[RMDB]
RNA sequence: GGGAACGACUCGAGUAGAGUCGAAAAAUUAGGCCUUUUGUAACUUGUACAAACGAAAGGUUGUACACUUUUCAGAAACAUACCUGAAUAGGUUAUGAGAUUGAUUAAUAGCAAUAAUGAUGUAUUACCUACGCACUACGUUCGCGUAGUGCGUAGGAAAAGAAACAACAACAACAAC
Reactivity to DMS in 0.01 (KOAc 150mM, MgCl2 10mM, bicine 150mM(pH8.5), 24C), signal-to-noise 1, nucleotides 027 to 126: a150u010u090a070g070g010c000c000u000u000u000u000g020u020a050a020c210u000u000g000u000a010c080a030a050a050c100g030a100a060a060g000g000u000u000g050u000a000c140a030c090u000u000u030u000c060a030g000a110a120a120c090a040u000a020c010c000u030g030a090a050u020a020g050g020u000u000a000u000g020a010g020a100u040u000g030a020u000u020a060a010u010a120g020c000a040a090u010a040a080u000g020a080u030g000u000a030u060u060a050
Reactivity to 2A3 in 0.01 (KOAc 150mM, MgCl2 10mM, bicine 150mM(pH8.5), 24C), signal-to-noise 2, nucleotides 027 to 126: a000u250u110a020g020g000c000c000u000u050u010u000g090u040a080a000c050u050u100g130u240a070c080a030a200a020c060g190a030a020a020g140g010u000u000g050u050a060c100a060c000u050u000u040u010c000a000g090a000a030a000c080a010u120a030c010c010u040g080a100a130u140a080g020g010u020u020a000u060g060a040g020a040u000u090g070a040u000u260a120a140u190a140g170c000a000a190u180a090a060u140g020a010u140g050u080a140u010u100a030
Structure probing data (DMS and 2A3) for a 177-nucleotide construct. The reactions ran in a buffer of 150 mM KOAc, 10 mM MgCl2 and 150 mM bicine (pH 8.5), at 24 C. It was measured as part of the RMDB library OK1LIB.